An RNA of 177 nucleotides, treated with DMS and 2A3 and read out base by base. The data come from the RNA Mapping Database (RMDB), library OK1LIB. For DMS, 67,420 sequencing reads were counted. The 2A3 profile rests on 20,297 reads. The RNA was probed in 150 mM KOAc, 10 mM MgCl2 and 150 mM bicine (pH 8.5) at 24 C. Reactivities are given for positions 27 through 126.
RNA sequence: GGGAACGACUCGAGUAGAGUCGAAAAUAAGAGAGAUUGACACAACAGCAAGGAACGCACUGUGAAAUCAGGAUUAAGGACUGGCAUCCAGUGGGACCUCCAGCCAGAUUCAGGAAUAUACGAAAAACUCUAGAGUGUGCUUCGGUGCGUUUUAGAGAAAAGAAACAACAACAACAAC
Reactivity to DMS in 0.01 (KOAc 150mM, MgCl2 10mM, bicine 150mM(pH8.5), 24C), signal-to-noise 9, nucleotides 027 to 126: u040a070a080g010a110g000a060g010a070u010u010g010a090c080a050c070a060a100c140a090g010c060a090a090g000g000a050a050c050g000c010a000c010u000g000u020g010a050a060a070u010c040a040g010g000a100u020u030a090a110g000g010a090c020u000g000g010c300a110u010c020c020a060g020u000g010g000g000a100c070c030u000c020c040a080g000c000c020a050g000a080u010u010c050a050g010g010a070a060u020a060u020a040c070g000a040a060a040a040a050
Reactivity to 2A3 in 0.01 (KOAc 150mM, MgCl2 10mM, bicine 150mM(pH8.5), 24C), signal-to-noise 6, nucleotides 027 to 126: u130a030a030g090a000g010a010g040a060u050u080g060a040c020a000c010a080a070c030a020g070c020a000a050g060g000a060a010c010g000c010a000c000u000g000u020g070a010a010a020u050c020a010g040g010a020u060u070a050a030g050g020a010c000u000g010g000c010a020u010c010c010a010g030u020g000g020g040a040c000c010u000c000c010a000g000c000c010a030g050a100u070u030c010a000g040g040a070a020u100a000u010a120c070g040a030a040a000a010a020